[RMDB]
Background
Chemical mapping of a 177-nucleotide RNA with 2A3 and DMS.
RNA sequence: GGGAACGACUCGAGUAGAGUCGAAAAAAGAGGAGAUGGCGCGGCACCUGAGGGAGUACCAGGAGCUCCUCAACGUCAAGAUGGCCCUGGACAUCGAGAUCGCCACCUACCGCAAGCUGCUGGAGGGAAAACAGUUUCUUUUCGAAGAAACUGUUUUAAAAGAAACAACAACAACAAC
Reactivity to 2A3 in 0.01 (KOAc 150mM, MgCl2 10mM, bicine 150mM(pH8.5), 24C), signal-to-noise 4, nucleotides 027 to 126: a000a000g090a040g010g020a060g010a030u100g000g030c040g010c040g080g000c030a040c020c010u020g000a070g010g040g020a060g030u050a090c000c020a010g040g010a050g010c010u020c020c000u020c010a040a050c070g090u080c040a040a030g030a040u040g030g000c000c020c040u050g060g000a020c000a030u040c010g010a010g020a080u070c030g040c020c000a040c010c020u120a170c000c020g030c070a050a050g030c020u070g000c030u050g010g030a030g020g020g010
Reactivity to DMS in 0.01 (KOAc 150mM, MgCl2 10mM, bicine 150mM(pH8.5), 24C), signal-to-noise 7, nucleotides 027 to 126: a080a060g000a070g000g010a070g010a080u010g010g000c040g030c090g000g000c070a090c060c050u000g010a090g010g010g000a090g010u000a090c050c040a040g000g000a110g010c020u000c030c010u010c030a070a080c150g000u010c080a070a160g000a050u000g000g010c030c020c030u000g000g000a070c050a060u000c030g000a150g010a050u010c040g010c030c020a070c040c030u000a100c060c030g010c070a070a070g000c060u000g010c020u010g010g010a090g000g000g000
For DMS the reverse transcriptase was MarathonRT. It was measured as part of the RMDB library OK2TST. The 2A3 profile rests on 6,681 reads.